RNA sequence: GGGAACGACUCGAGUAGAGUCGAAAAACGCCGUGUACGCACGGCGAGGGACCAAUGAUAAUGACUGUUGGGGUAUGAGUCAGUGAGGUUGAAUAACAGUUUGUAUCUGGAAAUCUGAGGUCCAAAAGAGGGUAAUAUAGUUCGCUAUAUUACCCUCAAAAGAAACAACAACAACAAC
Reactivity to DMS in 0.01 (KOAc 150mM, MgCl2 10mM, bicine 150mM(pH8.5), 24C), signal-to-noise 9, nucleotides 027 to 126: a130c010g020c000c000g010u000g010u020a100c210g030c010a010c000g000g000c000g000a040g000g000g010a020c000c000a040a210u020g000a040u000a090a060u010g010a040c020u000g000u010u000g000g000g000g010u020a080u010g000a080g000u000c050a060g000u000g010a090g010g010u010u010g000a110a100u020a040a040c050a030g000u010u000u010g010u010a050u010c060u010g000g010a110a070a080u020c070u000g000a300g000g000u000c000c000a080a040a070a100
Reactivity to 2A3 in 0.01 (KOAc 150mM, MgCl2 10mM, bicine 150mM(pH8.5), 24C), signal-to-noise 9, nucleotides 027 to 126: a000c010g000c000c060g000u000g020u040a040c260g000c100a000c000g000g030c010g000a080g020g010g000a000c010c000a010a040u090g020a010u010a170a080u140g030a010c010u030g040u070u060g040g040g010g030u150a120u210g080a060g080u090c070a030g050u060g140a060g080g080u180u140g090a090a070u190a080a000c010a020g020u030u070u080g090u070a130u070c060u110g050g070a070a140a020u010c010u020g010a010g010g000u010c000c020a030a000a000a010